[RMDB]
RNA sequence: GGGAACGACUCGAGUAGAGUCGAAAAAUCAGGGGCUCUGAAACGACGAGCUCCCGGUGCCUGCGCCGAUACGCCCUCGGCCUCCACCGUGUUGAUCUGCCCACAAGGCGGCUUGACGAGAUUGCGAGGCUAGUAAUAGCUUCGGCUAUUACUAGCCAAAAGAAACAACAACAACAAC
Reactivity to DMS in 0.01 (KOAc 150mM, MgCl2 10mM, bicine 150mM(pH8.5), 24C), signal-to-noise 3, nucleotides 027 to 126: a020u000c010a090g000g010g000g010c000u030c020u010g000a100a130a230c190g010a220c110g000a010g010c010u000c020c000c030g010g000u000g000c110c040u000g000c090g030c010c000g000a060u020a110c170g030c060c060c040u000c010g000g000c030c010u000c100c000a030c030c030g000u000g010u020u000g000a050u010c000u000g010c030c010c000a130c300a140a300g000g040c010g000g000c100u000u010g020a040c060g010a110g050a040u000u000g020c090g010a150
Reactivity to 2A3 in 0.01 (KOAc 150mM, MgCl2 10mM, bicine 150mM(pH8.5), 24C), signal-to-noise 2, nucleotides 027 to 126: a000u070c030a010g000g000g010g000c000u000c010u070g030a070a040a060c130g080a020c050g000a010g000c000u050c000c000c000g000g100u140g020c060c020u060g000c050g010c030c000g030a010u050a170c060g050c030c000c030u010c000g000g000c000c010u050c030c000a020c000c010g040u050g040u150u070g010a040u010c020u040g010c000c010c000a050c040a060a010g000g010c010g010g000c020u020u070g040a010c040g030a020g110a220u060u100g110c050g030a050